The record gives the reactivity of an RNA of 177 nucleotides to DMS and 2A3. The DMS profile rests on 1,309 reads. High DMS reactivity at an A or C suggests that its Watson-Crick edge is free. The reactions ran in a buffer of 150 mM KOAc, 10 mM MgCl2 and 150 mM bicine (pH 8.5), at 24 C. For 2A3, 1,445 sequencing reads were counted. For 2A3 the reverse transcriptase was SuperScript II with manganese.

RNA sequence: GGGAACGACUCGAGUAGAGUCGAAAAGAUGGACUAACCAGUACCAAAGAGCUUUGGUACUGACGGCCCACGAUCCACGACCAAAGAGCUUUGGAGGUGGAUAGAACCUGAGAUCUCUUGAGGAUCACACAAUGCCGCAUUUCGAUGCGGCAUUGUGAAAAGAAACAACAACAACAAC
Reactivity to DMS in 0.01 (KOAc 150mM, MgCl2 10mM, bicine 150mM(pH8.5), 24C), signal-to-noise 1, nucleotides 027 to 126: g000a130u010g020g000a100c000u010a100a180c300c030a020g000u000a010c000c000a020a000a040g000a270g000c160u000u000u000g000g000u000a000c000u000g010a020c130g000g000c020c000c000a000c110g000a040u000c000c000a070c010g000a260c050c000a000a000a020g000a130g000c300u000u000u000g020g000a110g000g030u000g000g040a100u000a000g040a060a120c100c020u000g090a120g000a030u010c000u000c040u060u000g000a080g050g000a020u000c020a300
Reactivity to 2A3 in 0.01 (KOAc 150mM, MgCl2 10mM, bicine 150mM(pH8.5), 24C), signal-to-noise 2, nucleotides 027 to 126: g080a200u020g010g000a000c010u020a050a040c040c000a000g000u000a010c000c000a000a050a000g300a090g120c160u040u000u000g000g000u000a000c030u000g000a010c030g010g000c000c000c000a000c030g010a010u000c000c000a000c010g120a100c000c000a000a030a010g280a080g200c190u000u010u010g000g020a050g130g000u040g000g000a000u000a020g070a020a010c010c010u060g000a080g010a110u000c000u000c010u080u270g030a080g070g060a020u000c000a000